[RMDB]
RNA sequence: GGGAACGACUCGAGUAGAGUCGAAAAAUAAGGCAAUGGGCAGAAGACAUGGGGGUCACAAACAACCAGGAUUAUUCCUCUAAAUCUAGCAGGGGGGCCAGAUAUUGGAUGCAUUCAUUCAGGAUGCCAGGGUGAAUCUAUUCGUAGAUUCACCCUGAAAAGAAACAACAACAACAAC
Reactivity to DMS in 0.01 (KOAc 150mM, MgCl2 10mM, bicine 150mM(pH8.5), 24C), signal-to-noise 2, nucleotides 027 to 126: a090u010a120a100g020g000c030a050a070u000g020g020g010c060a060g020a090a110g000a070c110a070u000g020g000g010g020g010u020c060a050c060a090a040a070c130a060a120c080c100a050g010g010a030u010u010a100u010u000c020c010u000c100u000a060a040a030u000c060u000a060g020c040a060g030g000g000g000g010g000c030c030a030g000a050u000a070u000u000g000g000a060u010g000c010a030u000u000c000a100u000u010c240a110g010g000a060u000g010c030
This 177-nucleotide RNA was probed chemically with DMS.
DMS adducts were read by reverse transcription with MarathonRT.
Values are in units of 0.01, from 0 to 300, in steps of 10.
The reactions ran in a buffer of 150 mM KOAc, 10 mM MgCl2 and 150 mM bicine (pH 8.5), at 24 C.